[RMDB]
RNA sequence: GGGAACGACUCGAGUAGAGUCGAAAAACGAGUGAGUUACGACUCACUCGACUUUUAAUGGUACCCAAAGGUCGUGACAAGUCGAUAAAACGCAGAGUCAAAAAGUCCGACGUUACGACGUCGGACAACGAGCGAGUUCUGUUCGCAGAACUCGCAACGUCAAAGUAAUGUUCGCAUUACUUUGACGAAAAGAAACAACAACAACAAC
Reactivity to DMS in 0.01 (KOAc 150mM, MgCl2 10mM, bicine 150mM(pH8.5), 24C), signal-to-noise 2, nucleotides 027 to 156: a100c040g000a000g000u000g010a030g010u000u000a120c160g010a160c000u000c000a040c010u000c000g010a040c020u000u030u000u010a080a170u000g010g020u000a150c020c030c000a060a100a080g000g020u000c030g010u000g020a120c030a080a170g020u000c020g050a150u000a050a060a150a090c070g040c050a090g000a140g000u020c070a040a020a140a070a110g000u000c000c000g020a040c000g030u000u000a110c170g030a080c020g100u000c000g010g010a000c020a020a030c060g000a140g080c000g020a010g020u000u000c000u000g020u000u020c290g050c010a050g010a000a000c000u000c000g050c000a010a000
Reactivity to 2A3 in 0.01 (KOAc 150mM, MgCl2 10mM, bicine 150mM(pH8.5), 24C), signal-to-noise 3, nucleotides 027 to 156: a010c020g000a000g000u000g000a020g010u030u080a110c240g050a040c070u010c010a000c000u000c000g000a000c010u050u080u030u130a160a110u150g070g010u110a110c010c000c000a060a060a020g060g020u060c020g040u020g040a070c050a100a060g050u040c010g050a080u100a170a130a010a000c050g000c070a020g030a020g150u070c050a020a050a040a050a060g010u000c000c010g000a010c010g000u010u050a050c260g020a000c000g030u010c000g000g020a000c000a010a010c020g040a020g020c010g000a000g000u000u000c000u010g030u050u050c240g000c070a000g000a000a000c000u000c000g000c000a000a000
This 207-nucleotide RNA was probed chemically with DMS and 2A3. The 2A3 profile rests on 3,534 reads. Values cover nucleotides 27 to 156. For DMS, 3,266 sequencing reads were counted.